[RMDB]
RNA sequence: GGGAACGACUCGAGUAGAGUCGAAAAUGGUAAUGACUGGAGAGCUAAUUUGAAUGAGAUAAAUACUUAUCAAAAAGCCAUAGAAGAAUCCCCGUUUUUUGAUAAAAACGGCAAUGAAAUAGAGUCUUCACUAUACGUGCUUCGGCACGUAUAGUGAAAAAGAAACAACAACAACAAC
Reactivity to 2A3 in 0.01 (KOAc 150mM, MgCl2 10mM, bicine 150mM(pH8.5), 24C), signal-to-noise 1, nucleotides 027 to 126: u040g080g010u080a110a000u230g040a020c010u100g000g040a100g000a010g030c030u040a070a200u050u090u040g140a210a110u010g000a000g060a080u070a160a110a000u140a180c000u000u000a010u010c000a000a070a000a000a000g010c010c000a040u060a140g110a090a000g010a000a060u090c030c010c000c000g000u000u000u000u000u000u110g140a110u280a020a000a000a000a000c010g000g000c000a000a080u110g100a030a020a020u180a020g110a040g020u050c000u010